[RMDB]
RNA sequence: GGGAACGACUCGAGUAGAGUCGAAAAUUACGGGAUACGCUUGCCUAUCACACCUGAAUAAGCGAGAAGAGACUAACAGGUUAGCCGUGGCUGUUUGGCCCUGUCAUAUGGCGUUUUGCCCCGGUGAAGUUUAAAUAAUAUGACUAUGAUCGUAGAGCUAACAGGUGAGGUUCGCCUCACCUGUUAGAAAAGAAACAACAACAACAAC
Reactivity to 2A3 in 0.01 (KOAc 150mM, MgCl2 10mM, bicine 150mM(pH8.5), 24C), signal-to-noise 3, nucleotides 027 to 156: u110u050a050c050g020g000g010a010u020a060c020g010c050u080u060g030c010c010u100a080u140c030a030c010a010c110c010u010g020a060a050u080a110a030g030c070g040a010g080a060a040g040a030g070a060c040u060a140a010c030a060g030g000u020u030a010g020c000c010g000u000g000g000c040u040g130u240u150u180g090g000c000c030c000u000g000u000c000a000u000a000u000g000g000c010g010u040u040u240u090g010c000c000c000c000g000g000u030g030a050a030g030u100u200u300a000a020a000u010a000a000u000a010u000g010a000c030u060a170u140g110a080u040c050g040u140a030g030a030g140
Reactivity to DMS in 0.01 (KOAc 150mM, MgCl2 10mM, bicine 150mM(pH8.5), 24C), signal-to-noise 1, nucleotides 027 to 156: u000u000a130c060g050g020g040a150u010a100c120g000c000u000u000g040c050c000u020a080u000c000a100c010a120c000c010u000g000a050a040u000a020a050g000c010g000a060g000a080a060g000a210g000a090c060u000a030a220c040a020g020g000u000u000a140g030c000c020g000u000g010g030c010u000g020u020u010u000g050g010c000c010c010u000g000u000c010a070u000a010u010g000g010c040g050u000u000u000u020g000c000c000c080c000g040g030u000g000a110a070g000u000u000u000a030a020a090u000a040a060u000a040u000g000a060c030u020a160u000g010a120u000c070g010u000a130g010a180g010
Overview
Conditions: 150 mM KOAc, 10 mM MgCl2 and 150 mM bicine (pH 8.5), 24 C. An RNA of 207 nucleotides, treated with 2A3 and DMS and read out base by base. The DMS profile rests on 2,435 reads. Source: RMDB library RSTRND, as collected in RNAgym. 2A3 adducts were read by reverse transcription with SuperScript II with manganese.